This 177-nucleotide RNA was probed chemically with 2A3 and DMS.
The reactions ran in a buffer of 150 mM KOAc, 10 mM MgCl2 and 150 mM bicine (pH 8.5), at 24 C.
The DMS profile rests on 22,120 reads.
It was measured as part of the RMDB library TTRDES.

[RMDB]
RNA sequence: GGGAACGACUCGAGUAGAGUCGAAAAGAUAUGGAACGUCGUAUGGACAUGAUGGACUCGGAAACGAGUUGAUCAUCAACAGCCAUCGACGUUCCUAAGUCAAAGAUGCAUCCUUCGGGAUGCAUCAGAUUUACAUAGUCUUCGGACUAUGUAAAUCAAAAGAAACAACAACAACAAC
Reactivity to 2A3 in 0.01 (KOAc 150mM, MgCl2 10mM, bicine 150mM(pH8.5), 24C), signal-to-noise 8, nucleotides 027 to 126: g000a000u010a000u060g000g000a000a000c000g010u000c010g050u300a030u020g000g040a140c110a300u020g000a010u020g090g000a000c000u000c010g000g000a010a010a010c010g000a010g010u010u030g200a030u020c010a000u020c060a030a250c060a160g150c010c000a000u000c000g000a000c000g000u000u000c000c000u000a000a000g000u000c010a040a030a200g000a000u010g000c000a000u000c010c000u020u060c240g190g000g000a000u000g000c000a000u000c000a000
Reactivity to DMS in 0.01 (KOAc 150mM, MgCl2 10mM, bicine 150mM(pH8.5), 24C), signal-to-noise 9, nucleotides 027 to 126: g000a020u000a090u020g000g000a010a000c000g010u000c000g010u020a010u000g010g000a140c280a060u000g010a010u000g000g000a010c000u000c010g010g000a020a030a060c000g010a010g010u000u000g010a020u000c000a010u000c140a100a170c300a130g010c000c000a010u000c000g000a010c000g010u010u000c000c000u000a000a050g000u000c010a110a120a110g000a010u000g000c000a010u000c000c000u000u020c240g020g000g010a010u000g000c000a000u000c000a030